[RMDB]
Chemical mapping of a 207-nucleotide RNA with 2A3 and DMS. For 2A3, 1,290 sequencing reads were counted.
RNA sequence: GGGAACGACUCGAGUAGAGUCGAAAAAAAACAUUUAUUUGCUGGCAUGUAUAGAAAUAUAACUGGUGUCAUUCUGCUGUCAGCAUGUCAGAAGAUUUUAGACUUUUCUGCAGUGGUUAUGAAAGCUUUAACCAUGUUACAGGGGCAGACUGAUACAUAAUAAAUGAUGGUUCGCCAUCAUUUAUUAAAAAGAAACAACAACAACAAC
Reactivity to 2A3 in 0.01 (KOAc 150mM, MgCl2 10mM, bicine 150mM(pH8.5), 24C), signal-to-noise 3, nucleotides 027 to 156: a050a000a000a000c290a070u300u300u220a160u100u090u120g000c000u000g010g000c020a030u020g030u070a120u070a260g100a110a160a070u190a030u060a270a200c100u170g110g000u010g000u020c010a040u010u010c010u010g020c000u000g070u030c000a020g000c000a000u000g010u010c000a000g050a130a000g020a070u060u080u150u300a080g030a150c000u150u080u070u060c020u050g030c000a030g050u010g050g020u040u030a030u070g200a180a170a000g020c010u040u070u080a000a010c010c000a010u000g060u040u040a040c000a030g020g030g000g010c010a010g010a000c010u010g010a010u020a030c020a010
Reactivity to DMS in 0.01 (KOAc 150mM, MgCl2 10mM, bicine 150mM(pH8.5), 24C), signal-to-noise 2, nucleotides 027 to 156: a080a080a060a060c060a040u000u000u000a060u000u000u010g010c010u020g010g000c050a050u000g000u000a120u000a070g020a150a050a070u000a040u000a050a110c120u000g000g020u000g030u000c030a050u000u000c020u000g020c030u000g000u000c020a110g000c010a020u010g010u000c030a210g000a020a040g000a060u000u000u000u010a150g010a050c030u010u000u010u000c060u010g020c160a240g050u010g000g030u000u000a040u000g020a070a070a040g010c090u000u000u000a000a100c150c010a020u000g000u000u000a050c040a060g000g020g010g020c020a040g000a040c060u010g000a070u000a020c020a260
Source information: Reactivities are given for positions 27 through 156. The RNA was probed in 150 mM KOAc, 10 mM MgCl2 and 150 mM bicine (pH 8.5) at 24 C. The DMS profile rests on 4,739 reads.